[RMDB]
RNA sequence: GGGAACGACUCGAGUAGAGUCGAAAAUCUAUCACCAGCCCAUGUUUACGACACGAAUGGGCUGUUGCAAAUUACGUAUAGCUCUUGCAACAUCGUGUCGAAAGGUUCCCAAGCUAUACGCCACAAACGGUAGAUCGACAUUCGUGUCGAUCUACCGAAAAGAAACAACAACAACAAC
Reactivity to 2A3 in 0.01 (KOAc 150mM, MgCl2 10mM, bicine 150mM(pH8.5), 24C), signal-to-noise 2, nucleotides 027 to 126: u000c010u030a080u120c030a010c080c010a000g010c000c020c000a010u060g110u110u180u050a050c040g000a020c010a000c010g040a070a100u120g030g000g000c000u000g000u000u000g010c010a000a060a130u200u080a040c000g020u010a010u020a010g020c000u000c050u180u060g030c020a020a010c000a060u040c010g040u000g020u060c020g040a180a080a000g030g000u020u020c010c000c000a000a000g010c010u000a000u000a000c020g000c010c010a150c040a030a110a010
Reactivity to DMS in 0.01 (KOAc 150mM, MgCl2 10mM, bicine 150mM(pH8.5), 24C), signal-to-noise 2, nucleotides 027 to 126: u000c140u000a050u010c090a120c050c040a060g000c000c000c000a070u010g000u010u000u000a180c000g000a040c000a000c040g010a090a060u000g010g010g020c040u010g010u000u020g020c040a010a070a150u010u000a100c020g000u000a020u000a000g000c000u000c180u000u030g010c070a040a030c020a070u020c030g030u010g000u000c000g000a090a120a050g000g030u000u000c000c000c000a100a030g010c000u000a020u000a030c010g030c070c100a110c190a050a080a100
An RNA of 177 nucleotides, treated with 2A3 and DMS and read out base by base. 2A3 adducts were read by reverse transcription with SuperScript II with manganese. For 2A3, 2,031 sequencing reads were counted.